[RMDB]
RNA sequence: GGGAACGACUCGAGUAGAGUCGAAAAAGUGUAUGAAGUACGUAGAGUGUCGUCAAGCUCUAUAUAUGGACACUUACGAAGGGUUUUGGUUGUUUUGUAUCUCAAGCCGACUUUGAGUAUUUGAGGAAAAAGACUUACGCCUUCGGGCGUAAGUCAAACCACUCAGUAUGUUCGCAUACUGAGUGGUAAAAGAAACAACAACAACAAC
Reactivity to 2A3 in 0.01 (KOAc 150mM, MgCl2 10mM, bicine 150mM(pH8.5), 24C), signal-to-noise 2, nucleotides 027 to 156: a000g090u080g010u060a170u130g080a090a030g020u070a040c040g000u010a020g020a010g070u060g080u130c120g140u030c070a110a020g010c030u040c040u040a040u020a010u000a030u090g060g000a000c000a000c030u040u070a010c100g050a050a040g110g010g010u060u060u100u120g060g000u010u030g000u010u020u010u060g040u030a090u020c010u000c010a000a010g000c040c010g130a130c100u140u110u130g040a060g060u040a080u040u070u060g040a020g020g000a150a040a000a000a000g010a000c000u000u000a000c000g010c000c000u040u040c210g050g000g000c000g000u000a000a000g000u000c000a000a000
Chemical mapping of a 207-nucleotide RNA with 2A3. For 2A3 the reverse transcriptase was SuperScript II with manganese.